[RMDB]
An RNA of 177 nucleotides, treated with DMS and 2A3 and read out base by base.

RNA sequence: GGGAACGACUCGAGUAGAGUCGAAAAUAAGCACGCCGCCGUACGGCCGAGAGGUGCUCUUCUCAUGGCGCGAAGCAAGACGGGCCUCCGUGUGGCGCAGUGCCUUCGUGCCAGCGAGGCGCUUGUACCCCAGUACCGUAUUCGUACGGUACUGGGGAAAAGAAACAACAACAACAAC
Reactivity to DMS in 0.01 (KOAc 150mM, MgCl2 10mM, bicine 150mM(pH8.5), 24C), signal-to-noise 2, nucleotides 027 to 126: u010a100a040g020c020a070c040g020c090c060g000c020c020g030u010a110c180g020g010c110c100g000a060g000a040g000g030u000g000c110u000c090u000u000c020u010c000a110u010g000g010c000g050c020g000a010a090g030c100a150a100g010a140c020g000g020g000c010c070u030c130c180g020u000g010u010g010g020c050g000c050a080g000u000g000c110c020u020u010c010g000u000g000c020c040a050g000c090g010a020g000g000c120g000c080u000u000g000u000a170
Reactivity to 2A3 in 0.01 (KOAc 150mM, MgCl2 10mM, bicine 150mM(pH8.5), 24C), signal-to-noise 2, nucleotides 027 to 126: u120a020a020g060c010a020c080g050c020c020g010c020c020g170u280a100c200g050g000c080c110g090a130g010a010g080g000u050g060c010u020c050u120u020c000u000c010a080u040g010g000c010g000c020g070a040a010g060c040a030a040g140a080c050g000g100g040c030c000u110c080c090g180u220g070u080g080g000c050g000c060a010g020u010g060c010c000u040u070c010g020u050g000c020c010a020g020c060g030a030g000g020c000g000c060u090u120g060u150a070

Overview
The reactions ran in a buffer of 150 mM KOAc, 10 mM MgCl2 and 150 mM bicine (pH 8.5), at 24 C. 2A3 is a SHAPE reagent: it acylates the 2'-hydroxyl of flexible nucleotides of all four kinds.